[RMDB]
RNA sequence: GGGAACGACUCGAGUAGAGUCGAAAAAUGGGGCCCUGGACCCCUCAGCUCUGGAGACUUCCGACCUGUGAGGUCGAGGAUUCCCCGUGGAGGGAGACAGCCACCGGGAUAGGACAGAGAAAUCACCAAACGCGCCAGUUCGCUGGCGCGAAAAGAAACAACAACAACAAC
Reactivity to 2A3 in 0.01 (KOAc 150mM, MgCl2 10mM, bicine 150mM(pH8.5), 24C), signal-to-noise 2, nucleotides 027 to 129: a000u140g010g000g010g000c000c040c000u010g080g050a040c030c000c020c010u010c040a020g010c020u020c010u080g000g000a030g020a210c020u040u030c000c000g030a070c000c030u140g050u130g120a050g030g010u010c030g010a030g000g030a060u080u100c000c030c000c000g030u060g030g010a060g020g080g000a070g010a010c000a000g010c000c000a050c020c030g010g000g030a020u070a040g030g010a030c020a050g000a000g020a050a040a000u080c020a040c020c020a050a090a030
Reactivity to DMS in 0.01 (KOAc 150mM, MgCl2 10mM, bicine 150mM(pH8.5), 24C), signal-to-noise 2, nucleotides 027 to 129: a070u000g050g000g020g030c300c010c000u030g000g000a110c010c010c040c000u010c040a050g030c110u000c030u030g030g010a080g050a090c060u010u010c050c030g030a010c060c000u040g020u060g030a100g000g000u020c020g000a010g020g010a110u020u010c020c060c000c000g050u070g000g020a140g050g010g000a080g000a090c110a080g010c000c000a020c050c100g000g000g000a010u000a030g070g000a140c100a060g030a070g000a060a100a110u050c030a090c000c030a000a090a140
An RNA of 170 nucleotides, treated with 2A3 and DMS and read out base by base. Values are in units of 0.01, from 0 to 300, in steps of 10. For 2A3 the reverse transcriptase was SuperScript II with manganese. The 2A3 profile rests on 4,456 reads.